Conditions: 150 mM KOAc, 10 mM MgCl2 and 150 mM bicine (pH 8.5), 24 C. The record gives the reactivity of an RNA of 207 nucleotides to 2A3. Source: RMDB library RNAMAK, as collected in RNAgym.
[RMDB]
RNA sequence: GGGAACGACUCGAGUAGAGUCGAAAAUCCUAAGUCGAUCGUAAGCCGAGCUUAGCUCCCCACCGCUAUCGGAAACGAUAGCGAGGCUAAGCGUUUGACGCUUACAGAUCGAUAUGGAAAAGAUGCUCAGGCAUUGUUCGCAAUGCCUGAGCAUCAAGUUUGAGGUAAACUUCGGUUUACCUCAAACAAAAGAAACAACAACAACAAC
Reactivity to 2A3 in 0.01 (KOAc 150mM, MgCl2 10mM, bicine 150mM(pH8.5), 24C), signal-to-noise 2, nucleotides 027 to 156: u010c000c000u010a100a030g020u000c000g000a000u000c010g010u000a000a000g030c040c050g020a010g020c020u000u000a000g000c030u090c030c030c000c020a020c000c010g000c000u000a000u000c000g080g070a180a040a080c000g000a000u000a010g010c010g010a000g010g000c000u000a000a000g000c000g010u120u060u160g060a070c060g000c000u000u010a010c040a030g000a000u000c010g000a000u000a070u060g040g020a030a090a090a120g010a000u000g000c000u010c000a000g020g000c000a020u030u030g030u110u090c300g000c150a000a000u010g000c000c000u000g000a000g000c000a000u000c010a010a000